RNA sequence: GGGAACGACUCGAGUAGAGUCGAAAAGAUAUGGAUAAUCUCCCCACCGAACUACGCUUGGUAAGUCGGAAACGACUUAUUGAGCGCGAGGAUUAUCCUAAGUCAAAGUAAACCUUCGGGUUUACAACACUAAUUUACUGUUCGCAGUAAAUUAGUGAAAAGAAACAACAACAACAAC
Reactivity to DMS in 0.01 (KOAc 150mM, MgCl2 10mM, bicine 150mM(pH8.5), 24C), signal-to-noise 7, nucleotides 027 to 126: g010a080u010a170u000g000g000a020u000a000a000u000c010u000c070c010c040c090a300c190c100g010a080a100c090u020a100c020g000c000u000u000g000g000u000a010a010g010u000c000g000g000a060a070a130c000g010a020c000u000u000a000u000u000g000a000g010c010g010c060g010a100g000g000a020u000u000a000u000c000c000u000a060a130g010u000c090a080a110a150g010u000a000a010a010c000c000u000u010c200g020g000g010u000u000u000a000c010a110a240
Reactivity to 2A3 in 0.01 (KOAc 150mM, MgCl2 10mM, bicine 150mM(pH8.5), 24C), signal-to-noise 2, nucleotides 027 to 126: g040a050u180a100u260g000g000a000u010a020a030u000c070u100c050c040c000c000a070c050c060g040a060a030c080u200a060c280g000c010u010u000g010g000u000a000a000g010u000c010g020g000a040a050a020c000g000a000c000u000u000a000u020u020g000a000g000c020g010c000g010a030g000g030a000u000u010a010u010c000c000u030a090a040g100u100c110a200a060a070g000u000a000a010a000c010c000u040u090c290g080g000g000u010u010u010a000c000a030a000